RNA sequence: GGGAACGACUCGAGUAGAGUCGAAAACAUUAUUUUCACCACAAGACACGUAACUUCCAUACAGCCUUGUGAUUGGGCUGCAGUUUUAUAGGAGCCGGAGUCUUCAGGCUUCUCCUGAUGAAGGCCCCAACACAAACGGGUUCGCCCGUUUGUGUUGAAAAGAAACAACAACAACAAC
Reactivity to 2A3 in 0.01 (KOAc 150mM, MgCl2 10mM, bicine 150mM(pH8.5), 24C), signal-to-noise 1, nucleotides 027 to 126: c020a020u100u120a190u200u300u050u050c070a060c070c010a040c020a030a030g020a010c020a030c240g050u070a090a120c070u220u020c100c000a070u050a140c020a020g020c000c020u110u080g050u050g070a090u040u120g030g010g000c010u030g010c010a000g020u020u000u090u160a170u060a100g000g010a010g020c030c020g090g010a070g020u040c120u070u040c020a040g020g000c000u000u000c010u000c000c000u020g000a070u070g000a040a030g000g000c000c010c000
Reactivity to DMS in 0.01 (KOAc 150mM, MgCl2 10mM, bicine 150mM(pH8.5), 24C), signal-to-noise 2, nucleotides 027 to 126: c100a110u020u010a060u010u010u000u000c070a060c080c000a070c070a040a040g000a030c070a040c100g000u010a040a090c160u030u020c120c110a210u010a060c040a050g030c000c000u000u010g020u000g000a150u020u010g010g010g000c010u010g010c150a040g000u000u000u000u010a110u010a070g010g000a030g010c100c050g000g010a040g000u000c160u020u000c030a060g010g000c070u010u000c050u000c080c080u000g010a080u010g010a110a170g000g000c000c000c040
The data come from the RNA Mapping Database (RMDB), library OK2TRN. This 177-nucleotide RNA was probed chemically with 2A3 and DMS. For 2A3, 870 sequencing reads were counted. DMS adducts were read by reverse transcription with MarathonRT. Conditions: 150 mM KOAc, 10 mM MgCl2 and 150 mM bicine (pH 8.5), 24 C. Values cover nucleotides 27 to 126.